This 177-nucleotide RNA was probed chemically with 2A3 and DMS.
For DMS the reverse transcriptase was MarathonRT.
For 2A3, 5,638 sequencing reads were counted.
For DMS, 7,009 sequencing reads were counted.
The RNA was probed in 150 mM KOAc, 10 mM MgCl2 and 150 mM bicine (pH 8.5) at 24 C.

RNA sequence: GGGAACGACUCGAGUAGAGUCGAAAAGAAUGUAAGAGCGUAAUCGCGCCUUGACGUGAGUGAGACAAGACAGAAAGCUAUCCAAAGUAAGAUAGCAUAGCUCACAAUACGCUGAUCUGUCAUAGAACCCUAUCCUACCAUUCGUGGUAGGAUAGGGAAAAGAAACAACAACAACAAC
Reactivity to 2A3 in 0.01 (KOAc 150mM, MgCl2 10mM, bicine 150mM(pH8.5), 24C), signal-to-noise 4, nucleotides 027 to 126: g080a010a070u270g000u290a110a010g020a030g030c020g000u010a020a100u050c010g000c010g020c040c090u080u160g020a060c010g000u010g000a010g000u020g000a050g010a070c060a120a050g030a010c000a010g090a050a080a000g000c000u000a000u000c010c060a230a040a050g090u150a140a030g120a030u000a000g000c000a000u020a010g000c000u010c000a020c000a020a050u090a020c030g000c020u010g010a100u070c020u010g010u010c040a030u080a140g120a080a090
Reactivity to DMS in 0.01 (KOAc 150mM, MgCl2 10mM, bicine 150mM(pH8.5), 24C), signal-to-noise 4, nucleotides 027 to 126: g020a140a110u030g000u060a050a070g000a070g000c010g040u000a080a300u000c060g000c020g000c010c120u040u020g010a110c000g020u000g000a050g000u000g010a070g010a130c100a100a140g000a040c060a020g000a060a090a200g010c000u010a000u000c000c120a100a100a170g000u030a070a140g010a010u000a030g010c010a090u020a040g000c000u010c010a030c000a080a060u010a010c000g000c000u000g000a070u000c000u000g000u000c010a150u020a120g000a060a130